[RMDB]
RNA sequence: GGGAACGACUCGAGUAGAGUCGAAAAACUUUGUGUAUCCUUGUUGCUGUGUGACACACGACGAUGGUAAAGCGUUCUAUUCAGAACUCAAGAGCCCCACGAAACGCCAUCUAGUUAUUGGGACAUCCACCCACUUUCGAUUCGUCGAAAGUGGGUGAAAAGAAACAACAACAACAAC
Reactivity to DMS in 0.01 (KOAc 150mM, MgCl2 10mM, bicine 150mM(pH8.5), 24C), signal-to-noise 1, nucleotides 027 to 126: a000c020u000u000u120g020u010g050u000a080u000c050c000u000u000g000u020u000g040c070u000g000u010g020u000g040a070c150a020c020a040c070g000a070c100g000a110u000g000g060u010a300a040a020g040c140g010u010u000c000u000a240u010u070c150a050g010a010a000c000u000c070a050a000g000a150g000c000c000c030c000a080c040g000a020a040a080c150g010c000c000a000u000c020u000a080g000u000u010a020u000u000g000g020g000a200c140a120u000c010
Source information: Chemical mapping of a 177-nucleotide RNA with DMS. For DMS the reverse transcriptase was MarathonRT. Source: RMDB library OK1LIB, as collected in RNAgym.